[RMDB]
RNA sequence: GGGAACGACUCGAGUAGAGUCGAAAAUAUCAAAAACGAUUCGAAGCUACGACGCAUGUUUUCAGCAACGGUGGUGGCCGGCGCCCACUGCGAGGCAUGCGGGUGGGCCCUGCCAAUGGAGGAGGCGCCGUGGCGGUACGUUCGCGUACCGCCACGGAAAAGAAACAACAACAACAAC
Reactivity to 2A3 in 0.01 (KOAc 150mM, MgCl2 10mM, bicine 150mM(pH8.5), 24C), signal-to-noise 1, nucleotides 027 to 126: u230a050u130c000a000a000a000a030a030c040g000a060u000u060c000g010a080a020g000c000u000a050c100g000a090c080g100c130a000u130g020u000u100u060u040c070a040g000c030a040a000c060g020g040u080g010g000u000g060g040c000c080g020g100c150g000c000c000c000a040c030u230g100c000g040a050g100g080c180a080u300g000c070g010g000g020u040g030g000g000c080c000c000u000g000c000c000a000a000u050g030g030a040g070g000a030g030g020c000g000